Source information:
The record gives the reactivity of an RNA of 207 nucleotides to 2A3 and DMS. Conditions: 150 mM KOAc, 10 mM MgCl2 and 150 mM bicine (pH 8.5), 24 C. Source: RMDB library M2RFPK, as collected in RNAgym.

RNA sequence: GGGAACGACUCGAGUAGAGUCGAAAAAAGGAAUUAGCGUGCCUUCAUGCUAAGGGUUUGAUAUCUGCUAAAACCCGGUGCAUUCAUCAAUGCAGGUUAAGCCAAAGGGAUGUCCCGACCUGAGGCCAAAAGUUCGCUACGUUCGCGUAGCGAACAAGACAUUACAAAAGUUCGCUUUUGUAAUGUCAAAAGAAACAACAACAACAAC
Reactivity to 2A3 in 0.01 (KOAc 150mM, MgCl2 10mM, bicine 150mM(pH8.5), 24C), signal-to-noise 3, nucleotides 027 to 156: a010a010g120g020a080a080u090u050a080g020c050g050u040g020c020c070u100u190c060a030u060g010c000u030a030a060g000g000g000u020u020u000g030a040u040a050u090c020u030g010c000u050a000a010a020a060c000c000c010g040g020u130g020c030a050u040u140c020a050u070c050a080a110u110g000c010a000g020g040u060u160a080a020g010c000c000a020a030a000g010g000g000a020u040g030u020c000c010c000g000a010c000c000u000g000a020g010g000c000c000a010a030a000a000g000u000u000c000g000c010u000a010c010g020u020u040c120g000c000g140u000a000g000c000g000a000a000c000a000a000
Reactivity to DMS in 0.01 (KOAc 150mM, MgCl2 10mM, bicine 150mM(pH8.5), 24C), signal-to-noise 3, nucleotides 027 to 156: a080a060g010g010a100a120u000u000a050g000c040g010u000g010c050c050u010u020c060a090u000g010c030u000a300a140g000g000g000u000u000u000g020a180u000a030u000c040u000g000c070u000a100a060a010a020c010c000c010g030g120u000g030c030a050u000u000c040a060u000c070a090a140u000g010c010a020g000g020u000u000a050a100g030c000c000a020a290a100g010g000g000a090u000g010u000c000c010c010g000a090c010c020u010g000a300g000g000c000c060a040a070a110a110g010u000u000c010g030c000u000a010c000g040u000u000c300g020c010g040u000a010g000c000g000a000a000c000a020a140